[RMDB]
RNA sequence: GGGAACGACUCGAGUAGAGUCGAAAAUGACAAGUGGGGUUUCAUCCAAAGCAAUUUAGAGCUUCACGCCCCAGGCCUGAGCCAUGUAAUAUAUAAAUUGGACGCUCAGCUCUAACUAAUCAGGAAAUACCCCUUCCAUAUUCGUAUGGAAGGGGUAAAAAGAAACAACAACAACAAC
Reactivity to DMS in 0.01 (KOAc 150mM, MgCl2 10mM, bicine 150mM(pH8.5), 24C), signal-to-noise 2, nucleotides 027 to 126: u010g030a170c120a110a140g010u010g020g010g010g020u000u040u000c030a180u010c110c040a100a030a090g020c100a100a090u000u000u000a050g020a110g020c010u000u020c060a050c060g000c020c010c050c160a120g000g020c260c100u000g000a060g030c010c020a070u000g000u000a120a110u000a110u030a110u020a030a080a040u020u000g020g000a100c230g020c010u000c020a030g010c050u010c050u000a030a100c130u000a110a070u000c080a160g010g000a060a070a230